About this RNA:
The record gives the reactivity of an RNA of 177 nucleotides to DMS and 2A3. The 2A3 profile rests on 12,211 reads. The RNA was probed in 150 mM KOAc, 10 mM MgCl2 and 150 mM bicine (pH 8.5) at 24 C. It was measured as part of the RMDB library OK1LIB.
RNA sequence: GGGAACGACUCGAGUAGAGUCGAAAAGACAUCAAUGAAUCCUGUAACAUUGGGAAUCUGCUGGCCAGAAAUUUGCGAAUCACUUGCUAGUCCGAGGACUAGUAGUGACUCUGCAAGUCAUGAUCCAACUCACUAAUUGGUUCGCCAAUUAGUGAGUAAAAGAAACAACAACAACAAC
Reactivity to DMS in 0.01 (KOAc 150mM, MgCl2 10mM, bicine 150mM(pH8.5), 24C), signal-to-noise 5, nucleotides 027 to 126: g000a090c060a100u020c070a030a060u000g010a110a080u000c030c000u010g000u040a120a130c110a080u020u010g000g010g010a050a110u010c030u000g000c060u000g000g020c230c010a070g010a060a100a040u020u010u000g000c010g000a020a070u000c010a000c000u020u020g080c000u000a000g010u010c000c030g020a190g000g000a010c000u000a000g000u000a000g010u010g000a010c030u000c010u020g030c000a000a020g000u020c050a090u010g000a090u020c010c040a070
Reactivity to 2A3 in 0.01 (KOAc 150mM, MgCl2 10mM, bicine 150mM(pH8.5), 24C), signal-to-noise 8, nucleotides 027 to 126: g050a020c030a070u090c050a040a090u130g080a100a080u080c020c040u120g070u230a100a070c030a130u090u150g040g000g030a030a090u020c020u040g020c020u050g050g010c040c010a040g080a040a140a030u030u020u010g000c000g000a010a010u000c000a000c020u060u180g010c000u000a000g000u000c010c030g080a160g110g010a010c000u000a000g000u010a000g000u000g000a010c010u010c050u130g000c000a000a010g010u020c050a060u070g040a030u030c010c010a020